Notes:
Conditions: 150 mM KOAc, 10 mM MgCl2 and 150 mM bicine (pH 8.5), 24 C. The record gives the reactivity of an RNA of 207 nucleotides to DMS and 2A3. For DMS the reverse transcriptase was MarathonRT.

RNA sequence: GGGAACGACUCGAGUAGAGUCGAAAACUCCCCUCAAAAUCGUUUCAGUCCAAAAUUGAUUCGGCGGCCCCGUCAUGAGGCCGAAACGAAGGCACGUACCCCUUCGAAUGGCGUCGGGGAGUCAGCGAAAGCACUGACCCUUUCGAGGGUCAGUGAAUCUUAACCAGAAGUUCGCUUCUGGUUAAGAAAAAGAAACAACAACAACAAC
Reactivity to DMS in 0.01 (KOAc 150mM, MgCl2 10mM, bicine 150mM(pH8.5), 24C), signal-to-noise 1, nucleotides 027 to 156: c040u000c020c000c040c010u010c090a090a140a080a030u010c040g050u010u000u000c080a080g020u000c050c080a120a100a160a190u010u000g010a090u000u010c120g020g000c040g020g020c010c000c000c020g030u010c150a110u000g000a090g000g000c000c010g010a010a060a150c000g010a000a090g030g000c030a170c200g020u000a190c000c080c000c000u000u000c000g030a100a170u000g010g010c060g020u010c010g010g010g020g010a120g090u000c050a140g030c020g000a110a110a130g000c020a020c010u020g000a020c020c010c010u000u000u020c250g000a050g050g000g000u010c020a000g000u010g000a020a020
Reactivity to 2A3 in 0.01 (KOAc 150mM, MgCl2 10mM, bicine 150mM(pH8.5), 24C), signal-to-noise 1, nucleotides 027 to 156: c020u000c000c000c060c000u090c060a090a150a160a300u080c010g010u020u000u090c090a140g110u100c060c100a160a110a110a110u060u090g060a140u160u000c000g100g010c010g000g070c040c000c000c000g020u070c040a160u150g050a060g180g000c060c000g020a000a000a000c000g000a000a000g010g030c070a000c240g070u180a020c040c040c000c000u000u030c000g090a100a110u110g010g010c040g010u010c010g000g000g030g030a020g000u000c040a040g010c010g060a110a030a000g070c020a000c000u010g000a000c000c020c000u000u150u050c260g100a000g000g000g000u000c000a000g010u000g000a000a020